[RMDB]
RNA sequence: GGGAACGACUCGAGUAGAGUCGAAAACAACAAAACUGGACGAGUCUCAAGCUUAUUUUCACAGACUAUUCUGGACGUUUCCACCAUGUAUCGAGACAUUCUGUCAUUGCAAGCCAAAAGAACAAAAGCGACUACAUGACUUCGGUCAUGUAGUCGCAAAAGAAACAACAACAACAAC
Reactivity to 2A3 in 0.01 (KOAc 150mM, MgCl2 10mM, bicine 150mM(pH8.5), 24C), signal-to-noise 2, nucleotides 027 to 126: c050a000a000c000a080a000a000a200c150u120g020g050a000c020g080a000g000u080c000u050c060a080a080g130c110u170u140a090u030u100u050u050c010a100c020a010g050a090c000u060a050u070u090c040u110g110g000a000c010g000u070u130u090c000c000a010c010c000a000u020g100u080a100u100c020g050a000g010a150c050a000u060u130c030u200g040u040c000a050u000u110g000c000a000a000g000c030c010a090a170a000a000g080a110a010c040a000a100a000a000
This 177-nucleotide RNA was probed chemically with 2A3. Source: RMDB library OK1LIB, as collected in RNAgym. The reactions ran in a buffer of 150 mM KOAc, 10 mM MgCl2 and 150 mM bicine (pH 8.5), at 24 C. 2A3 adducts were read by reverse transcription with SuperScript II with manganese.